Structure probing data (DMS and 2A3) for a 177-nucleotide construct. The RNA was probed in 150 mM KOAc, 10 mM MgCl2 and 150 mM bicine (pH 8.5) at 24 C.
RNA sequence: GGGAACGACUCGAGUAGAGUCGAAAAGCGACGAAGCUGCCGCUUCCAUGGCAAAGCCGCUGGUAAACAUCUCCGGUAGAACGAUCACAUCGCGCCCGGUAAUACCUUCCAGUUGACGAUCAAAAUGGAAGCGUAUUCUAUUCGUAGAAUACGCUUCAAAAGAAACAACAACAACAAC
Reactivity to DMS in 0.01 (KOAc 150mM, MgCl2 10mM, bicine 150mM(pH8.5), 24C), signal-to-noise 5, nucleotides 027 to 126: g020c030g010a060c040g020a110a130g040c090u000g020c050c030g010c060u000u000c030c060a090u010g010g010c060a040a090a180g020c030c040g010c020u000g000g010u000a070a060a090c120a050u010c080u010c020c010g010g040u000a070g000a050a050c040g000a040u000c150a100c050a300u000c030g010c140g000c040c000c020g010g000u000a070a030u000a100c070c030u000u000c010c000a040g010u000u010g020a090c070g000a070u010c100a040a040a080a070u000g000
Reactivity to 2A3 in 0.01 (KOAc 150mM, MgCl2 10mM, bicine 150mM(pH8.5), 24C), signal-to-noise 2, nucleotides 027 to 126: g020c000g020a050c040g030a040a040g030c110u070g060c020c020g000c000u070u000c050c010a100u100g050g000c010a100a050a020g050c020c020g000c040u000g000g050u090a060a080a030c030a070u040c030u000c060c000g010g000u060a050g030a110a030c020g010a030u040c080a040c020a200u020c020g000c010g050c010c010c000g000g010u030a040a020u040a070c000c000u030u020c010c020a030g000u150u210g100a050c060g050a100u150c090a030a080a030a070u190g070